The data come from the RNA Mapping Database (RMDB), library RSTRND. Structure probing data (2A3) for a 207-nucleotide construct.
[RMDB]
RNA sequence: GGGAACGACUCGAGUAGAGUCGAAAAGUUUAUAAUAACUGGCAAAUCAAACAAUAAUUUCGCAGUAGCUGCCUAAUCGCACUCUGCAUCGCCUAACAGCAUUUCCUAUGUGCUGUUAACGCGAUUCAACCUUAAUAGGAUAUGCUAAACACUGCCGCACCAUCUAGUCCUUCGGGACUAGAUGGUGAAAAGAAACAACAACAACAAC
Reactivity to 2A3 in 0.01 (KOAc 150mM, MgCl2 10mM, bicine 150mM(pH8.5), 24C), signal-to-noise 2, nucleotides 027 to 156: g020u050u080u030a180u090a220a080u120a070a020c030u080g030g050c060a040a060a100u170c070a130a100a240c080a060a130u220a120a170u130u240u280c070g000c010a010g010u220a000g000c200u020g040c010c010u060a050a030u160c070g000c000a020c000u030c010u000g000c000a000u010c000g020c000c000u000a000a000c000a000g000c000a000u060u010u060c010c000u040a040u020g000u000g000c010u000g000u010u000a000a010c020g010c000g020a020u070u100c080a010a070c000c020u130u260a040a000u010a030g000g010a000u010a070u150g050c070u080a010a060a050c090a050c130u070g010c000c010g010

Description
The reactions ran in a buffer of 150 mM KOAc, 10 mM MgCl2 and 150 mM bicine (pH 8.5), at 24 C.